[RMDB]
RNA sequence: GGGAACGACUCGAGUAGAGUCGAAAACACGUUACCAUUCACUGAUUGAAUAUCUCCCUGCUGCCUCACGAAAGCAUAUGGCAAGAAUUAGUGGCCUUGUCAGAGAAGAUUGGGAAACCAUUUCAGACAUUAAAUGGGCUUUCGAGCCCAUUUAAUGAAAAGAAACAACAACAACAAC
Reactivity to DMS in 0.01 (KOAc 150mM, MgCl2 10mM, bicine 150mM(pH8.5), 24C), signal-to-noise 4, nucleotides 027 to 126: c070a120c090g020u010u000a100c020c000a100u010u000c060a100c090u000g010a070u010u000g000a090a050u000a060u000c100u000c010c020c020u010g030c030u000g000c090c020u020c100a070c140g020a100a090a100g010c060a080u000a080u000g000g010c020a010a030g000a070a070u000u010a050g020u010g010g010c190c020u000u000g010u000c010a050g020a150g010a100a070g010a070u000u000g010g010g000a090a080a100c130c070a050u010u000u000c030a080g010a300
Reactivity to 2A3 in 0.01 (KOAc 150mM, MgCl2 10mM, bicine 150mM(pH8.5), 24C), signal-to-noise 2, nucleotides 027 to 126: c040a010c040g060u090u080a050c030c010a070u080u080c030a050c060u060g070a130u170u080g060a130a040u140a130u070c020u030c000c000c000u000g010c020u030g030c040c000u020c000a090c050g110a050a040a000g010c010a050u090a080u150g010g000c000a000a010g000a020a060u060u060a060g070u000g040g020c010c000u000u020g000u010c000a000g010a000g030a150a060g060a090u000u140g000g000g000a050a000a000c010c030a040u030u050u030c000a030g060a090
The record gives the reactivity of an RNA of 177 nucleotides to DMS and 2A3. The data come from the RNA Mapping Database (RMDB), library OK2TST. Reactivities are given for positions 27 through 126. Conditions: 150 mM KOAc, 10 mM MgCl2 and 150 mM bicine (pH 8.5), 24 C. 2A3 is a SHAPE reagent: it acylates the 2'-hydroxyl of flexible nucleotides of all four kinds.